[RMDB]
RNA sequence: GGGAACGACUCGAGUAGAGUCGAAAAGACUCUUACAAAGCGAUAGUUGUAGGAGUAUUAGUCUUACUAUCGCACUAUUGGACAUUUAAGACUAGGAGUUGCUAUUGCGUCCAAUAGAUGGCAACUGGCACUGCACGCUAUUCGUAGUGUGUAGUGCAAAAGAAACAACAACAACAAC
Reactivity to 2A3 in 0.01 (KOAc 150mM, MgCl2 10mM, bicine 150mM(pH8.5), 24C), signal-to-noise 9, nucleotides 027 to 126: g010a000c000u000c000u000u000a000c010a000a010a010g010c000g000a000u000a000g010u000u010g000u010a000g000g020a010g020u010a060u050u120a010g040u000c030u060u120a070c000u010a000u000c000g000c000a000c000u000a010u000u010g000g000a000c020a030u080u090u080a150a040g050a060c040u070a120g090g040a040g050u030u010g000c010u030a030u110u170g050c060g000u000c000c000a000a000u010a010g050a010u010g050g000c000a010a010c020u020g060
Reactivity to DMS in 0.01 (KOAc 150mM, MgCl2 10mM, bicine 150mM(pH8.5), 24C), signal-to-noise 9, nucleotides 027 to 126: g010a040c000u000c000u000u000a000c000a010a010a220g010c000g000a010u000a000g020u000u000g010u000a010g000g000a020g010u000a050u010u000a100g010u010c120u010u010a130c010u000a000u000c000g020c000a300c020u000a010u000u000g000g000a010c010a200u000u010u010a090a100g010a110c100u010a110g010g010a050g010u000u000g000c010u000a110u000u000g010c120g010u000c000c000a010a010u000a010g000a080u000g010g010c030a030a030c040u010g010